The record gives the reactivity of an RNA of 207 nucleotides to DMS and 2A3. Values cover nucleotides 27 to 156. 2A3 adducts were read by reverse transcription with SuperScript II with manganese.
RNA sequence: GGGAACGACUCGAGUAGAGUCGAAAAGAUAAAUGUUCAUUGAUUCCUGAUCAGAGGUGUAUUUGAGGAAGAGAAACCCAGGAGCAAUGUAGGAUGGAUUUGAGGAGAGAAAGAACAGAGACAUGAGAUGAGUAGGAGGCUGAUGCAGUGAUUCAGCUGGAAUGUGGUAAUUCGUUACCACAUUCCAAAAAGAAACAACAACAACAAC
Reactivity to DMS in 0.01 (KOAc 150mM, MgCl2 10mM, bicine 150mM(pH8.5), 24C), signal-to-noise 3, nucleotides 027 to 156: g000a180u010a080a090a120u010g020u000u000c060a090u000u000g010a160u000u010c010c020u020g000a160u010c070a170g020a090g020g030u010g000u020a040u000u020u010g010a090g030g030a050a060g020a090g000a080a030a070c050c020c060a130g040g030a120g040c060a050a060u010g030u010a080g000g010a080u010g030g000a110u000u010u000g020a140g000g020a080g030a110g010a080a030a120g000a050a140c030a110g010a080g020a040c070a040u000g010a080g000a040u010g010a080g020u000a080g020g020a100g020g030c020u000g010a030u000g010c020a130g020u000g020a190u020u000c040a050g020c150
Reactivity to 2A3 in 0.01 (KOAc 150mM, MgCl2 10mM, bicine 150mM(pH8.5), 24C), signal-to-noise 4, nucleotides 027 to 156: g050a010u180a070a150a070u140g040u120u110c030a030u100u100g060a050u130u030c020c010u040g020a100u060c070a040g040a040g000g050u070g030u080a140u060u140u110g050a020g040g000a050a040g020a020g000a110a040a020c020c010c010a020g030g000a040g010c050a060a020u100g010u050a060g050g040a020u030g040g000a040u040u040u130g030a030g020g000a030g000a060g010a050a040a000g010a030a020c040a050g040a000g010a060c030a070u160g010a060g000a060u080g020a010g020u030a000g040g020a010g010g000c010u000g000a010u030g010c020a030g010u030g050a070u050u070c030a000g010c040